[RMDB]
Source: RMDB library OK2TRN, as collected in RNAgym. The record gives the reactivity of an RNA of 177 nucleotides to 2A3 and DMS. Values cover nucleotides 27 to 126. Conditions: 150 mM KOAc, 10 mM MgCl2 and 150 mM bicine (pH 8.5), 24 C. For DMS the reverse transcriptase was MarathonRT.

RNA sequence: GGGAACGACUCGAGUAGAGUCGAAAACAGAAACCAGGUGCGCUUCGCAUUCUGAAUCAUUCACUUCGCCUUGCAGCCAUGACGGCUCACGGUAAAGGUGAGCGUGUUAACGAAGAUUAUCUGCGUCCGCUGCGACACUUUUCGAAGUGUCGCAGCGAAAAGAAACAACAACAACAAC
Reactivity to 2A3 in 0.01 (KOAc 150mM, MgCl2 10mM, bicine 150mM(pH8.5), 24C), signal-to-noise 1, nucleotides 027 to 126: c030a020g110a050a050a030c030c010a000g000g030u020g030c050g000c060u130u070c070g030c050a090u210u040c040u040g140a050a110u150c020a050u000u130c010a000c040u020u020c000g000c030c020u000u020g000c010a000g010c020c000a190u300g140a110c130g010g000c000u030c020a010c030g070g020u070a090a080a010g000g010u010g000a000g010c050g010u080g050u060u030a050a010c050g000a040a020g000a040u000u070a020u080c010u030g000c010g080u000c060
Reactivity to DMS in 0.01 (KOAc 150mM, MgCl2 10mM, bicine 150mM(pH8.5), 24C), signal-to-noise 1, nucleotides 027 to 126: c080a090g020a090a050a090c150c040a010g010g000u000g010c080g030c150u000u000c080g000c100a170u010u000c110u020g000a070a010u000c100a040u000u020c020a060c030u000u000c300g000c070c010u000u000g030c200a030g020c030c000a100u000g020a170c210g000g030c010u000c000a040c100g030g000u000a040a070a040g010g000u000g010a010g000c030g030u000g000u000u000a060a110c040g020a020a010g010a030u010u000a060u000c000u000g000c120g010u000c150